Chemical mapping of a 177-nucleotide RNA with 2A3 and DMS. It was measured as part of the RMDB library OK1LIB. The reactions ran in a buffer of 150 mM KOAc, 10 mM MgCl2 and 150 mM bicine (pH 8.5), at 24 C. Reactivities are given for positions 27 through 126.

[RMDB]
RNA sequence: GGGAACGACUCGAGUAGAGUCGAAAAUCAGGGCGACAGGACGUCGAACCAGUGGGACUAAUGCAUGAUCACCAGAUACAAGCCUGAGUCGGGGUUUGUCGCCCGUAGCGGUGGUCCCGACCGGAAGGUAGGUUGAAGCAUUCGUGCUUCAACCUACAAAAGAAACAACAACAACAAC
Reactivity to 2A3 in 0.01 (KOAc 150mM, MgCl2 10mM, bicine 150mM(pH8.5), 24C), signal-to-noise 7, nucleotides 027 to 126: u150c050a070g000g000g000c000g000a010c000a000g100g030a010c110g300u020c010g010a030a050c010c000a010g030u140g040g040g040a060c040u110a170a070u210g090c080a080u120g040a070u160c040a090c190c000a020g020a080u120a110c050a060a030g080c000c000u050g010a050g030u000c010g000g000g000g000u000u020u080g000u010c010g000c010c000c010g000u010a010g030c030g020g000u020g000g060u010c000c000c000g000a010c000c000g010g050a090a040g160
Reactivity to DMS in 0.01 (KOAc 150mM, MgCl2 10mM, bicine 150mM(pH8.5), 24C), signal-to-noise 4, nucleotides 027 to 126: u050c050a300g010g000g000c000g000a010c010a030g000g000a010c010g010u000c010g000a010a080c000c010a030g000u020g000g010g030a160c110u010a090a060u030g000c110a050u040g040a100u010c110a180c170c060a070g000a060u070a100c230a060a170g010c200c010u000g000a090g010u000c000g000g000g000g000u000u000u010g010u000c020g000c000c000c010g010u020a030g000c000g000g010u010g010g010u010c000c000c000g000a030c000c000g010g010a140a060g010